[RMDB]
RNA sequence: GGGAACGACUCGAGUAGAGUCGAAAACCGACUCUCUUUAGACUUAAGGGAGGUGCACCUGUAAAAAAAGUAGCCUUUGGCGGUGAUCAAGUACAUGAGGUUGCUGCUGUAAGAAGUGUUACUGUCGACGACCACUUGUUCGCAAGUGGUAAAAGAAACAACAACAACAAC
Reactivity to 2A3 in 0.01 (KOAc 150mM, MgCl2 10mM, bicine 150mM(pH8.5), 24C), signal-to-noise 9, nucleotides 027 to 129: c000c000g070a060c000u000c010u000c000u030u040u120a110g090a190c040u110u120a030a010g030g010g000a000g010g010u080g010c020a140c030c080u170g120u300a050a090a030a010a000a000a030g020u010a010g000c010c000u000u010u090g010g000c000g010g010u020g000a000u020c040a070a120g100u150a160c060a170u210g120a070g040g000u000u010g020c010u000g000c000u040g070u210a120a040g040a060a010g050u040g020u200u030a020c010u050g080u120c070g060a120c060g040
Reactivity to DMS in 0.01 (KOAc 150mM, MgCl2 10mM, bicine 150mM(pH8.5), 24C), signal-to-noise 9, nucleotides 027 to 129: c040c000g030a110c020u000c030u000c020u010u010u040a050g030a140c170u020u020a070a000g010g000g000a030g040g030u030g040c100a100c100c050u050g000u030a000a000a050a080a080a080a030g000u020a030g000c010c010u000u000u000g010g040c010g020g050u000g000a050u000c030a060a100g040u000a110c200a120u060g020a150g010g010u010u010g030c000u000g020c010u000g010u020a090a070g000a080a060g000u050g020u010u000a010c000u030g000u020c080g020a220c260g020

This 170-nucleotide RNA was probed chemically with 2A3 and DMS. Reactivities are given for positions 27 through 129. For DMS, 57,324 sequencing reads were counted. The reactions ran in a buffer of 150 mM KOAc, 10 mM MgCl2 and 150 mM bicine (pH 8.5), at 24 C.